[RMDB]
Chemical mapping of a 177-nucleotide RNA with 2A3 and DMS. The data come from the RNA Mapping Database (RMDB), library OK2TRN. The 2A3 profile rests on 18,229 reads. DMS adducts were read by reverse transcription with MarathonRT. Reactivities are given for positions 27 through 126.
RNA sequence: GGGAACGACUCGAGUAGAGUCGAAAACCCGAUCAGAGGCCAUGCGCUACUCACAGCGAUCCAGGCCCUGACGGCGCGGCCUCAGCGCGUGGAUCGAGACAGUACGAUCAUCUACGACUGAUCGGCGCGGAACUGUAAAGUUCGCUUUACAGUUCCGAAAAGAAACAACAACAACAAC
Reactivity to 2A3 in 0.01 (KOAc 150mM, MgCl2 10mM, bicine 150mM(pH8.5), 24C), signal-to-noise 7, nucleotides 027 to 126: c000c000c000g010a070u040c010a010g050a050g080g040c050c030a070u120g010c030g020c070u060a060c020u050c050a120c060a060g040c010g020a020u020c020c020a040g090g030c010c020c000u020g010a030c100g020g030c120g030c060g240g080c000c010u000c000a010g010c030g000c030g120u010g000g000a010u010c040g010a010g030a050c050a050g050u100a060c040g020a080u080c020a010u000c040u100a070c060g170a140c020u010g000a010u030c010g020g010c040g000
Reactivity to DMS in 0.01 (KOAc 150mM, MgCl2 10mM, bicine 150mM(pH8.5), 24C), signal-to-noise 8, nucleotides 027 to 126: c070c000c010g010a060u010c050a020g010a210g000g010c120c220a080u000g010c040g010c090u000a050c080u010c130a120c230a120g010c000g000a030u000c050c110a070g000g000c000c050c020u000g000a020c170g030g000c010g010c170g020g010c010c020u000c000a020g010c280g010c010g000u000g000g000a020u000c030g010a070g000a100c160a070g020u010a060c070g000a110u020c050a040u000c060u010a140c120g000a130c080u000g010a020u000c030g010g000c120g010